[RMDB]
RNA sequence: GGGAACGACUCGAGUAGAGUCGAAAAGCAAAGCCUGGCGACAACAGCGACCGCGACGUCGGCCAGCGCUGGUUGGGACACCGUCCUGCAAAGCAUCACCACUAUCUUGGCGAACCUCACUGGGCCGUCGAGUUGCAGGAUUCGUCCUGCAACUCGAAAAAGAAACAACAACAACAAC
Reactivity to 2A3 in 0.01 (KOAc 150mM, MgCl2 10mM, bicine 150mM(pH8.5), 24C), signal-to-noise 1, nucleotides 027 to 126: g030c020a060a060a000g010c000c030u000g030g020c040g050a020c040a180a030c060a050g000c000g110a180c020c210g040c000g050a060c030g030u030c000g110g130c020c030a000g000c000g000c000u000g020g020u050u080g200g000g000a010c060a020c210c100g010u040c010c000u050g000c010a070a060a010g000c020a000u040c030a050c090c030a040c060u130a180u100c040u000u100g010g020c050g020a060a050c010c000u030c010a130c140u060g010g040g000c000c000g060
Reactivity to DMS in 0.01 (KOAc 150mM, MgCl2 10mM, bicine 150mM(pH8.5), 24C), signal-to-noise 2, nucleotides 027 to 126: g000c070a100a160a060g010c070c000u000g030g000c010g010a050c030a060a210c140a300g000c040g000a060c270c300g010c030g000a030c290g010u000c000g050g020c000c000a020g040c170g030c000u000g030g010u000u000g000g000g000a040c080a050c190c110g000u010c020c000u000g020c050a050a120a110g000c080a110u000c010a100c090c000a140c160u000a050u000c020u010u010g000g020c030g020a100a110c030c010u000c180a110c070u000g000g020g000c100c100g000
Chemical mapping of a 177-nucleotide RNA with 2A3 and DMS. The RNA was probed in 150 mM KOAc, 10 mM MgCl2 and 150 mM bicine (pH 8.5) at 24 C. It was measured as part of the RMDB library OK2TST. For 2A3, 1,103 sequencing reads were counted.